Source: RMDB library OK2TST, as collected in RNAgym. The record gives the reactivity of an RNA of 177 nucleotides to 2A3 and DMS. For 2A3 the reverse transcriptase was SuperScript II with manganese. The 2A3 profile rests on 1,707 reads. Conditions: 150 mM KOAc, 10 mM MgCl2 and 150 mM bicine (pH 8.5), 24 C.
RNA sequence: GGGAACGACUCGAGUAGAGUCGAAAAAUCACUAACAGGCCGCUUUUGUAGUAGCCGUCAGAGAAAUCGAUCGCUUUUUUACGCUCGUCGGUGAUGGUAAUGCCCGCCAGCGCCAGAUCGACGUUUAGUAUAGGUAAUCCUUCGGGAUUACCUAUACAAAAGAAACAACAACAACAAC
Reactivity to 2A3 in 0.01 (KOAc 150mM, MgCl2 10mM, bicine 150mM(pH8.5), 24C), signal-to-noise 3, nucleotides 027 to 126: a010u020c010a000c070u040a170a030c030a190g030g010c020c000g020c060u150u130u150u300g270u280a030g020u030a000g010c010c010g010u010c030a020g060a020g050a110a100a010u080c070g050a060u080c030g100c100u080u070u090u030u140u170a020c050g040c050u020c010g020u010c040g000g000u040g040a070u020g020g040u120a200a040u150g040c030c020c010g000c020c010a010g000c010g030c000c000a070g010a060u080c020g020a050c020g030u060u100u130a040
Reactivity to DMS in 0.01 (KOAc 150mM, MgCl2 10mM, bicine 150mM(pH8.5), 24C), signal-to-noise 3, nucleotides 027 to 126: a080u010c030a080c030u020a060a040c040a130g010g020c010c020g010c010u000u000u000u000g020u020a040g030u000a060g020c000c020g020u000c060a030g010a090g010a060a090a100u010c070g000a060u000c150g000c050u000u020u020u000u000u010a080c080g010c160u000c030g010u000c040g000g010u000g000a080u010g000g000u010a040a110u000g020c060c010c020g010c030c020a060g000c010g000c020c030a120g010a030u000c020g010a030c050g000u010u010u010a100